[RMDB]
This 177-nucleotide RNA was probed chemically with 2A3 and DMS. The 2A3 profile rests on 6,066 reads. DMS adducts were read by reverse transcription with MarathonRT. Conditions: 150 mM KOAc, 10 mM MgCl2 and 150 mM bicine (pH 8.5), 24 C. Reactivities are given for positions 27 through 126. The DMS profile rests on 10,416 reads.
RNA sequence: GGGAACGACUCGAGUAGAGUCGAAAAGAUAUGGAGUGAACUACUUCCUAGGGAGCGUUGAAAUACCAUGUAAACUCGGAAACGAGUUUACAUGGUAUGGAGCUCCCGAAGGAAGCACUCCUAAGUCCUAUUCUUAAAUGUUCGCAUUUAAGAAUAGAAAAGAAACAACAACAACAAC
Reactivity to 2A3 in 0.01 (KOAc 150mM, MgCl2 10mM, bicine 150mM(pH8.5), 24C), signal-to-noise 2, nucleotides 027 to 126: g070a050u160a060u300g000g010a000g040u020g030a130a050c050u170a090c020u300u000c010c020u030a010g000g000g000a010g000c000g130u300u060g000a050a030a000u000a010c000c000a000u000g030u010a010a010a000c000u000c000g060g020a150a130a060c000g000a000g000u000u020u020a000c030a000u030g000g000u000a000u000g010g000a000g010c000u000c000c000c000g000a010a020g010g000a000a000g010c020a000c010u020c000c000u010a160a020g010u000c010
Reactivity to DMS in 0.01 (KOAc 150mM, MgCl2 10mM, bicine 150mM(pH8.5), 24C), signal-to-noise 6, nucleotides 027 to 126: g010a100u010a300u010g000g010a030g020u000g010a130a100c160u020a300c010u000u000c000c000u000a300g000g000g010a020g020c000g000u000u030g000a160a110a010u000a000c000c000a000u000g000u000a000a000a010c000u000c000g010g000a090a090a260c000g020a030g010u000u000u000a000c000a000u010g000g000u000a000u000g000g000a140g020c010u000c000c000c010g000a040a070g000g000a010a010g000c010a000c000u000c000c000u010a030a110g010u010c040